[RMDB]
RNA sequence: GGGAACGACUCGAGUAGAGUCGAAAAGAAAAGAAAGAAAGAUGAUGUCUCCUUACCGCUAUCAAUGGAGGCAAACUCGCACAUGGCGAAGGUGGGAACGAUGAAGGUAAUGCCACCAUAAAAGAAAAAUCCUAGUAGCGUUCGCGCUACUAGGAUUAAAAGAAACAACAACAACAAC
Reactivity to DMS in 0.01 (KOAc 150mM, MgCl2 10mM, bicine 150mM(pH8.5), 24C), signal-to-noise 2, nucleotides 027 to 126: g000a180a090a090a090g000a060a050a060g000a050a080a130g000a120u000g020a180u000g010u000c010u040c020c010u000u000a070c080c100g000c180u010a030u020c100a040a070u020g070g000a070g000g000c010a050a070a040c110u000c010g000c030a060c130a120u010g000g000c020g000a070a060g000g010u010g020g000g040a090a030c110g030a050u010g000a150a110g000g000u010a000a130u050g020c080c040a010c040c040a000u050a050a060a090a130g020a030a160a110
Reactivity to 2A3 in 0.01 (KOAc 150mM, MgCl2 10mM, bicine 150mM(pH8.5), 24C), signal-to-noise 1, nucleotides 027 to 126: g050a000a010a000a000g190a050a110a040g030a100a100a000g080a100u150g000a000u000g000u050c040u030c010c020u090u030a170c060c060g000c240u090a020u300c010a020a010u150g020g000a000g020g000c000a030a030a030c000u000c020g050c000a050c050a130u230g130g000c000g000a040a040g000g010u000g000g040g000a000a200c050g040a110u090g040a050a130g050g000u130a020a000u040g190c020c020a000c000c000a000u160a000a180a000a000g140a000a000a020